[RMDB]
Structure probing data (2A3) for a 207-nucleotide construct. The data come from the RNA Mapping Database (RMDB), library OK3TST. Conditions: 150 mM KOAc, 10 mM MgCl2 and 150 mM bicine (pH 8.5), 24 C.
RNA sequence: GGGAACGACUCGAGUAGAGUCGAAAAUGUAUCUAGUUCAUGGCUGCAUUCCUGGGACCUAGCGCACAGUAGGUGCGCAGUAAACAAAUGAGGGUGAAUCAACUAGCCCACGGUUAGUGAGGGACUGCGCUAGGAAUCACCCAGGCCUGUCUGACAACACGAUACGUACUUUCGAGUACGUAUCGUGAAAAGAAACAACAACAACAAC
Reactivity to 2A3 in 0.01 (KOAc 150mM, MgCl2 10mM, bicine 150mM(pH8.5), 24C), signal-to-noise 1, nucleotides 027 to 156: u140g030u060a070u000c020u020a010g080u090u090c090a020u170g010g000c000u010g040c030a020u000u000c000c000u000g020g000g020a070c000c000u010a000g000c000g000c010a030c050a080g090u100a040g100g050u050g080c060g000c020a000g000u070a010a190a060c120a070a100a090u270g040a260g010g060g090u130g060a000a040u040c020a000a060c030u030a020g070c030c020c030a070c020g040g040u100u060a040g000u040g130a090g000g010g000a000c050u030g000c000g000c000u000a000g080g110a100a120u030c000a070c000c000c010a000g050g000c000c000u140g000u070c060u050g000a000c010a090a020